This 177-nucleotide RNA was probed chemically with DMS and 2A3.

RNA sequence: GGGAACGACUCGAGUAGAGUCGAAAAGAUAUGGAAAUUGAACUACCAGCCGAGAAUGCAUUCACGAAGAACUUUGUCGGAAACGACAAAGGGAGUGAAUGUUCUCGGCUGGCAAUUUCCUAAGUCAGUAAAUAUAGUACUUCGGUACUAUAUUUACAAAAGAAACAACAACAACAAC
Reactivity to DMS in 0.01 (KOAc 150mM, MgCl2 10mM, bicine 150mM(pH8.5), 24C), signal-to-noise 3, nucleotides 027 to 126: g020a060u000a300u000g000g010a020a010a000u000u000g000a120a050c120u020a300c000c000a010g010c000c000g010a020g000a060a090u010g010c040a030u000u000c000a020c000g030a100a150g010a130a180c000u000u010u000g010u000c010g000g010a070a070a200c010g010a000c010a000a000a010g000g000g000a070g020u000g010a000a000u000g020u000u000c000u000c000g000g000c000u010g020g010c010a000a000u000u000u000c000c000u000a050a100g000u010c060a120
Reactivity to 2A3 in 0.01 (KOAc 150mM, MgCl2 10mM, bicine 150mM(pH8.5), 24C), signal-to-noise 2, nucleotides 027 to 126: g040a050u110a050u200g010g010a000a000a030u010u020g020a110a060c080u140a110c300c000a000g000c010c000g020a010g000a050a080u300g070c000a020u000u010c000a010c200g220a300a120g010a060a020c030u000u010u030g000u000c010g030g000a090a070a080c000g000a000c000a000a000a000g030g000g000a020g000u000g000a000a000u010g010u020u010c000u000c000g040g010c000u000g000g000c000a000a000u000u000u000c000c010u000a090a020g050u030c070a010
It was measured as part of the RMDB library TTRINS. For DMS the reverse transcriptase was MarathonRT. Values are in units of 0.01, from 0 to 300, in steps of 10.